This 177-nucleotide RNA was probed chemically with DMS and 2A3. The RNA was probed in 150 mM KOAc, 10 mM MgCl2 and 150 mM bicine (pH 8.5) at 24 C. Source: RMDB library M2PK50, as collected in RNAgym. For 2A3 the reverse transcriptase was SuperScript II with manganese. For DMS the reverse transcriptase was MarathonRT. Values cover nucleotides 27 to 126.
RNA sequence: GGGAACGACUCGAGUAGAGUCGAAAACCCUUUGUGUUCGCACAAAGGGAAAACUCAGAAAGAUCAAAAAGAUCAGCGAUAAAACUGACAAAUAAACGCAAAAAACCUCCUCGUUCGCGAGGAGGAACUAAUGUUACUGGUUCGCCAGUAACAUUAGAAAAGAAACAACAACAACAAC
Reactivity to DMS in 0.01 (KOAc 150mM, MgCl2 10mM, bicine 150mM(pH8.5), 24C), signal-to-noise 3, nucleotides 027 to 126: c010c000c000u000u010u010g020u000g000u010u010c180g040c010a020c000a000a010a020g000g020g000a040a010a100a130c040u000c020a120g010a100a080a110g000a040u010c040a080a090a110a170a150g010a040u010c000a040g010c050g010a150u010a060a040a110a080c060u000g010a040c100a060a100a090u000a050a040a130c100g020c100a020a050a080a060a070a090c000c000u000c000c000u000c000g020u020u010c190g010c000g000a010g010g000a000g010g010a000a020
Reactivity to 2A3 in 0.01 (KOAc 150mM, MgCl2 10mM, bicine 150mM(pH8.5), 24C), signal-to-noise 6, nucleotides 027 to 126: c000c000c000u000u000u000g030u010g010u010u050c170g040c060a010c000a000a010a010g000g000g000a040a100a010a010c040u030c020a010g180a110a090a010g070a070u090c080a130a230a130a050a030g030a080u010c030a030g030c030g100a070u100a270a130a020a050c050u080g090a040c060a020a120a020u150a080a080a020c040g000c060a030a030a000a010a090a170c000c000u000c000c000u000c000g040u050u040c220g000c010g090a000g000g000a000g000g000a000a000